This 177-nucleotide RNA was probed chemically with 2A3 and DMS.

RNA sequence: GGGAACGACUCGAGUAGAGUCGAAAAGGUCGCCCGGUCCAGCGACUUUCUCGAUGGGCAACUGGACUUCCGCGGACAACUGGCGGUGCGCAGCCACCUGCUCAUGUGCGGGCAUUGCCGGCGCUUCUGUCGGGGAAAGAUUCGUCUUUCCCCGACAAAAAGAAACAACAACAACAAC
Reactivity to 2A3 in 0.01 (KOAc 150mM, MgCl2 10mM, bicine 150mM(pH8.5), 24C), signal-to-noise 2, nucleotides 027 to 126: g020g000u010c010g000c000c010c000g000g000u010c000c000a010g000c020g010a000c000u010u040u040c040u020c010g100a180u140g010g070g000c050a070a020c120u090g000g020a010c000u120u020c030c030g000c010g020g030a090c020a100a080c140u080g030g000c020g050g020u020g010c060g000c030a030g070c050c020a040c000c020u070g010c020u040c070a140u110g080u110g080c040g040g000g000c030a050u020u150g000c010c000g060g010c030g010c000u110u030c040
Reactivity to DMS in 0.01 (KOAc 150mM, MgCl2 10mM, bicine 150mM(pH8.5), 24C), signal-to-noise 2, nucleotides 027 to 126: g020g050u000c030g090c040c020c040g020g000u000c000c020a280g010c010g030a010c000u000u010u000c030u000c030g050a080u010g000g040g020c020a120a050c140u000g010g010a000c010u000u020c070c040g020c050g000g010a060c210a130a160c060u020g000g000c020g010g020u020g010c050g040c140a140g010c040c140a110c050c010u000g000c040u030c080a110u010g000u000g020c000g010g000g000c060a090u040u000g030c000c010g000g000c030g020c050u020u000c110

Reactivities are given for positions 27 through 126.
The 2A3 profile rests on 1,736 reads.
It was measured as part of the RMDB library RFM100.